[RMDB]
RNA sequence: GGGAACGACUCGAGUAGAGUCGAAAAUCGUGCUAUCGGGCAUCGUAUCGGUGCCGGGCCAGUUAAGGUUAUUCAUGAUAUCAGCGAGAUGGAUAGAAUUCAGGCUGGUGAUGUGCUGGUAACAGACGGCAGAUACUAUGUUCGCAUAGUAUCUGCCAAAAGAAACAACAACAACAAC
Reactivity to 2A3 in 0.01 (KOAc 150mM, MgCl2 10mM, bicine 150mM(pH8.5), 24C), signal-to-noise 2, nucleotides 027 to 126: u040c010g010u060g000c020u050a030u230c000g100g000g000c020a000u010c000g090u140a160u180c140g010g040u030g000c000c000g000g020g010c020c010a010g000u070u080a180a030g090g040u030u070a020u070u110c030a010u080g080a080u040a060u090c020a050g050c050g190a160g000a130u060g030g010a010u050a140g120a040a090u150u080c020a020g080g000c000u020g050g020u020g060a070u080g020u040g040c040u060g010g010u020a100a010c010a050g120a060c030
Reactivity to DMS in 0.01 (KOAc 150mM, MgCl2 10mM, bicine 150mM(pH8.5), 24C), signal-to-noise 3, nucleotides 027 to 126: u000c110g040u000g010c030u000a040u010c020g020g020g000c010a030u000c010g030u010a110u010c080g050g000u000g000c010c010g000g000g000c010c020a080g020u000u000a120a080g020g000u000u010a050u000u010c030a060u010g020a190u010a050u010c050a090g030c100g000a140g010a070u010g010g000a070u000a050g010a040a300u000u000c050a050g010g000c010u000g000g000u000g010a060u000g010u010g010c050u010g000g010u010a030a090c100a080g010a140c180
About this RNA:
This 177-nucleotide RNA was probed chemically with 2A3 and DMS. 2A3 adducts were read by reverse transcription with SuperScript II with manganese. Reactivities are rounded to 0.1 and cut off at 0 and 3. High 2A3 reactivity points to a flexible backbone, as in loops and unpaired stretches. In probing experiments dimethyl sulfate is read out at A N1 and C N3, which are open when not base-paired.